[RMDB]
RNA sequence: GGGAACGACUCGAGUAGAGUCGAAAAUGAAUUACACGCACAACCGUUACGGCCUUCUUGGUAGCUUAAACCUCGAGGCCUGGAGCACCACGAAGGUGUAGCCGAACUGUCGAUCAGCGGUCAAGAGUCCUCAUUCUACAUUCGUGUAGAAUGAGGAAAAAGAAACAACAACAACAAC
Reactivity to DMS in 0.01 (KOAc 150mM, MgCl2 10mM, bicine 150mM(pH8.5), 24C), signal-to-noise 6, nucleotides 027 to 126: u010g010a110a080u010u000a070c090a090c060g000c060a090c080a080a060c060c050g010u000u010a110c160g010g010c000c010u000u010c010u010u000g010g010u010a070g010c150u000u000a060a130a060c020c010u000c100g010a070g010g010c020c010u010g010g000a150g010c010a060c020c010a070c130g010a100a090g010g010u000g010u000a080g020c020c010g000a030a080c070u000g000u000c070g010a060u010c070a060g010c020g010g000u000c120a050a100g000a110g000
Reactivity to 2A3 in 0.01 (KOAc 150mM, MgCl2 10mM, bicine 150mM(pH8.5), 24C), signal-to-noise 3, nucleotides 027 to 126: u080g070a000a090u240u100a070c110a020c070g070c010a030c050a110a000c010c020g060u080u120a090c060g050g000c030c000u110u170c010u010u110g010g020u020a040g010c020u160u200a200a160a050c000c010u060c060g030a080g000g000c010c000u000g000g020a000g000c010a000c010c000a020c150g110a070a040g000g020u040g010u070a050g030c000c030g020a080a060c040u060g040u100c040g050a150u110c030a020g020c020g050g010u060c030a050a030g020a020g170
This 177-nucleotide RNA was probed chemically with DMS and 2A3. Conditions: 150 mM KOAc, 10 mM MgCl2 and 150 mM bicine (pH 8.5), 24 C. It was measured as part of the RMDB library OK2TRN. For DMS, 7,249 sequencing reads were counted.